[RMDB]
RNA sequence: GGGAACGACUCGAGUAGAGUCGAAAACAAGAAGGUCGAGAAGUCUCAAGCUACGAGGGGGGACCCCCGAGACGCUGGAGACGCCCGGGAACAAGGAAAUAGAACAAGGUACGGUAGAAAAGAGCGAAGACGUUGUCCUUCGGGACAACGAAAAGAAACAACAACAACAAC
Reactivity to 2A3 in 0.01 (KOAc 150mM, MgCl2 10mM, bicine 150mM(pH8.5), 24C), signal-to-noise 4, nucleotides 027 to 129: c030a010a010g050a030a000g000g030u040c030g040a030g010a180a030g070u010c000u000c030a020a020g020c020u090a050c070g010a040g000g000g000g010g010g110a090c020c000c010c000c000g010a010g010a010c040g010c020u010g010g010a020g000a020c000g020c020c000c000g000g010g030a030a040c030a050a010g020g020a030a050a010u120a030g030a030a020c040a050a050g030g020u080a050c020g030g000u040a030g080a030a030a000a010g150a020g040c060g020a020a010g040a040
Reactivity to DMS in 0.01 (KOAc 150mM, MgCl2 10mM, bicine 150mM(pH8.5), 24C), signal-to-noise 3, nucleotides 027 to 129: c090a130a130g010a030a040g040g050u010c050g000a000g030a000a000g020u040c010u000c000a110a150g030c050u050a190c080g050a110g040g030g080g020g070g050a060c000c000c000c000c000g020a000g050a080c290g050c040u000g020g000a050g030a020c040g000c000c000c000g000g000g000a030a070c120a050a080g030g030a040a040a030u040a010g000a160a070c070a010a020g080g040u020a050c120g000g000u000a080g000a030a040a030a030g020a070g000c020g020a040a020g000a000

This 170-nucleotide RNA was probed chemically with 2A3 and DMS. The 2A3 profile rests on 6,684 reads. It was measured as part of the RMDB library 15KLIB. As a SHAPE reagent, 2A3 marks flexible, mostly unpaired nucleotides at the ribose 2'-OH. For DMS, 9,828 sequencing reads were counted. The RNA was probed in 150 mM KOAc, 10 mM MgCl2 and 150 mM bicine (pH 8.5) at 24 C.